An RNA of 177 nucleotides, treated with DMS and 2A3 and read out base by base. The DMS profile rests on 27,767 reads. The RNA was probed in 150 mM KOAc, 10 mM MgCl2 and 150 mM bicine (pH 8.5) at 24 C. For 2A3, 22,993 sequencing reads were counted. For 2A3 the reverse transcriptase was SuperScript II with manganese. DMS adducts were read by reverse transcription with MarathonRT.
RNA sequence: GGGAACGACUCGAGUAGAGUCGAAAAGACCGUUUGCUCAAUGGAAGCUAAACGCGGCACUCGUACAGCCGAUUGGUAACCAAGUGUAUACAAGAGCAACGCGGGAGCAGCAAGUACAAUCGGUUGAAGACUCUUUGCUGUUCGCAGCAGAGAGUCUAAAAGAAACAACAACAACAAC
Reactivity to DMS in 0.01 (KOAc 150mM, MgCl2 10mM, bicine 150mM(pH8.5), 24C), signal-to-noise 9, nucleotides 027 to 126: g000a140c050c010g010u020u000u000g000c010u000c020a160a130u030g020g020a100a260g000c020u010a050a070a100c130g010c030g010g010c040a090c050u010c120g010u030a100c100a060g010c010c000g010a070u000u000g000g000u010a030a300c070c050a070a120g020u010g000u030a070u020a080c110a100a140g010a040g000c020a010a050c130g000c080g000g000g010a070g010c060a100g000c110a050a100g010u020a070c040a030a030u010c040g000g010u010u000g010a130
Reactivity to 2A3 in 0.01 (KOAc 150mM, MgCl2 10mM, bicine 150mM(pH8.5), 24C), signal-to-noise 9, nucleotides 027 to 126: g070a010c000c010g010u020u030u040g010c020u030c030a140a230u180g070g040a130a020g010c040u090a110a050a020c110g010c010g050g000c020a040c050u100c060g110u160a070c030a020g010c000c000g020a030u010u040g030g040u050a030a020c010c000a080a040g050u030g040u080a080u050a150c080a110a030g010a000g050c010a020a020c060g010c020g030g020g020a030g010c020a000g010c020a090a110g070u070a100c040a030a040u050c040g040g000u020u040g040a040